[RMDB]
RNA sequence: GGGAACGACUCGAGUAGAGUCGAAAAUAUUAGUCAUUGUAGUGAAGAGAUUGUACAACCCAUCACUUUCUAACUUUGCGUUAGCAUUGUGCAGUGGUGUAAUGUGGUUGUACACUUAUAGCAUUGGGUAUUUCAGAGUGUUCGCACUCUGAAAUACAAAAGAAACAACAACAACAAC
Reactivity to DMS in 0.01 (KOAc 150mM, MgCl2 10mM, bicine 150mM(pH8.5), 24C), signal-to-noise 3, nucleotides 027 to 126: u010a080u000u000a080g000u000c020a030u010u010g020u000a100g010u010g000a080a130g000a100g010a080u000u010g020u000a010c010a010a020c000c000c000a020u000c000a020c000u000u010u000c010u000a160a060c000u010u000u000g000c020g010u010u000a080g010c010a010u000u010g010u010g000c300a030g000u010g000g000u010g010u010a030a020u000g010u020g010g010u000u000g010u000a000c010a020c010u000u000a060u000a190g010c040a040u010u000g010g020
Reactivity to 2A3 in 0.01 (KOAc 150mM, MgCl2 10mM, bicine 150mM(pH8.5), 24C), signal-to-noise 3, nucleotides 027 to 126: u070a000u080u070a040g070u050c040a030u030u070g040u060a150g030u020g120a100a060g050a030g010a070u070u110g000u000a000c000a010a000c000c000c000a010u030c000a000c010u110u250u100c010u020a000a020c000u000u000u000g010c020g140u110u100a030g010c000a010u020u020g020u020g080c060a010g020u000g030g000u000g030u050a050a070u080g080u150g020g010u010u000g000u000a000c010a000c000u040u050a080u110a090g030c030a050u020u070g120g030
Source information:
Source: RMDB library 15KREP, as collected in RNAgym. This 177-nucleotide RNA was probed chemically with DMS and 2A3. The RNA was probed in 150 mM KOAc, 10 mM MgCl2 and 150 mM bicine (pH 8.5) at 24 C. For DMS, 3,436 sequencing reads were counted. For 2A3 the reverse transcriptase was SuperScript II with manganese.